Source: RMDB library M2RFPK, as collected in RNAgym. Structure probing data (DMS and 2A3) for a 207-nucleotide construct. Reactivities are given for positions 27 through 156.
RNA sequence: GGGAACGACUCGAGUAGAGUCGAAAAUCCGACUCUCAUAGGCUCUCCAACCCAACUCCUAUUCAAUACGUCCUCGUCGUACAGAACGGUAACAUGUUUUCCGAACAUCCGCGCUUGGGUAUACGAGAAAGGCGUAGAUUAUUCGUAAUCUACGCAAACGUGGAAAUAGUUUCGACUAUUUCCACGUAAAAGAAACAACAACAACAAC
Reactivity to DMS in 0.01 (KOAc 150mM, MgCl2 10mM, bicine 150mM(pH8.5), 24C), signal-to-noise 3, nucleotides 027 to 156: u010c040c020g010a110c030u000c010u020c010a130u020a120g010g010c040u000c020u010c000c030a080a140c050c020c020a110a090c020u010c030c010u000a080u000u000c040a060a080u000a060c030g000u000c020c010u010c080g000u000c070g010u000a100c040a120g000a040a100c020g020g010u000a070a070c140a070u000g010u000u000u000u000c080c080g020a080a080c000a110u000c030c020g010c030g000c060u000u000g020g020g020u000a100u010a050c040g010a140g000a060a060a100g020g020c000g030u000a000g020a030u000u000a050u000u000c240g040u000a020a020u000c000u000a010c000g030c000a010a000
Reactivity to 2A3 in 0.01 (KOAc 150mM, MgCl2 10mM, bicine 150mM(pH8.5), 24C), signal-to-noise 5, nucleotides 027 to 156: u040c010c000g020a010c010u020c000u020c030a120u060a120g050g040c010u010c000u000c020c010a050a050c010c000c020a030a020c010u020c020c010u050a060u020u070c030a040a040u030a030c020g030u030c010c010u020c030g050u010c020g000u040a040c020a070g050a110a020c010g030g030u080a070a060c040a100u090g050u030u050u040u060c050c040g020a030a010c000a040u030c020c020g040c000g020c080u060u060g050g000g010u090a050u030a120c030g010a020g000a100a050a020g150g000c000g000u000a000g000a000u010u010a020u030u020c020g010u010a000a000u000c000u000a000c000g000c000a010a040
The RNA was probed in 150 mM KOAc, 10 mM MgCl2 and 150 mM bicine (pH 8.5) at 24 C. For 2A3 the reverse transcriptase was SuperScript II with manganese.